RNA sequence: GGGAACGACUCGAGUAGAGUCGAAAAUACGUACCUAGUGUCGAGUACUACGUACAGAGCUGAUCCGCUAGACAUGAUGAUCGUACCAUGACAUGCUAGAGUACCUAGCUAGUAUGCUAGCAUGUGAACUCCAUAUGUUAUUCGUAACAUAUGGAGUAAAAGAAACAACAACAACAAC
Reactivity to DMS in 0.01 (KOAc 150mM, MgCl2 10mM, bicine 150mM(pH8.5), 24C), signal-to-noise 9, nucleotides 027 to 126: u010a050c080g010u000a040c030c010u010a210g010u000g010u000c060g010a150g020u000a050c050u010a070c210g010u000a050c060a150g010a080g010c040u000g010a090u010c130c120g010c040u000a090g000a040c030a030u000g000a120u000g000a040u000c040g010u000a110c050c030a120u010g000a050c010a010u000g000c000u000a010g000a080g010u000a010c010c010u000a170g000c140u000a190g000u000a010u010g000c000u000a010g000c000a010u000g010u000g010a080
Reactivity to 2A3 in 0.01 (KOAc 150mM, MgCl2 10mM, bicine 150mM(pH8.5), 24C), signal-to-noise 9, nucleotides 027 to 126: u100a010c030g030u030a030c000c010u020a020g020u010g050u080c050g030a030g060u050a040c040u040a050c160g030u010a030c030a040g110a020g060c050u080g060a140u080c050c040g000c050u050a030g020a050c020a040u090g020a080u080g010a020u090c010g010u040a080c020c030a070u120g090a010c000a000u010g000c000u010a010g000a010g020u000a010c000c000u010a020g020c010u010a020g010u010a010u030g020c000u000a000g000c000a000u010g010u010g020a010